Structure probing data (DMS and 2A3) for a 177-nucleotide construct. The reactions ran in a buffer of 150 mM KOAc, 10 mM MgCl2 and 150 mM bicine (pH 8.5), at 24 C.
RNA sequence: GGGAACGACUCGAGUAGAGUCGAAAAAGCUUGCGCUGAUUACGUCCCUGCCCUUUGUACACACCGCCCGUCGCUACUACCGAUUGAAUGGCUCAGUGAGGCCUUCGGACUGGCACAGGGACGUUGGCUUGUAGAUAUUGUUCGCAAUAUCUACAAGAAAAGAAACAACAACAACAAC
Reactivity to DMS in 0.01 (KOAc 150mM, MgCl2 10mM, bicine 150mM(pH8.5), 24C), signal-to-noise 9, nucleotides 027 to 126: a050g010c030u000u010g010c180g020c030u000g010a160u020u010a040c040g010u000c000c000c010u000g000c260c020c020u000u010u010g020u010a080c090a080c110a100c080c060g010c040c020c030g010u010c080g010c050u000a050c110u010a110c070c030g010a090u010u020g010a070a050u020g010g010c030u000c040a160g010u020g010a130g000g000c010c010u000u000c010g010g010a150c130u010g000g010c070a200c040a050g000g000g000a020c020g010u000u000g000g010
Reactivity to 2A3 in 0.01 (KOAc 150mM, MgCl2 10mM, bicine 150mM(pH8.5), 24C), signal-to-noise 9, nucleotides 027 to 126: a000g050c060u110u130g020c050g000c060u040g060a170u120u140a010c010g020u010c010c000c000u020g030c000c010c010u090u110u140g120u130a030c070a010c010a020c050c040g020c010c010c000g030u040c030g020c040u050a070c020u060a090c050c010g070a070u040u130g080a100a100u150g030g000c010u010c050a170g090u100g170a100g020g040c000c000u010u020c020g040g020a050c030u030g020g000c020a010c020a030g000g010g010a010c010g000u020u030g040g020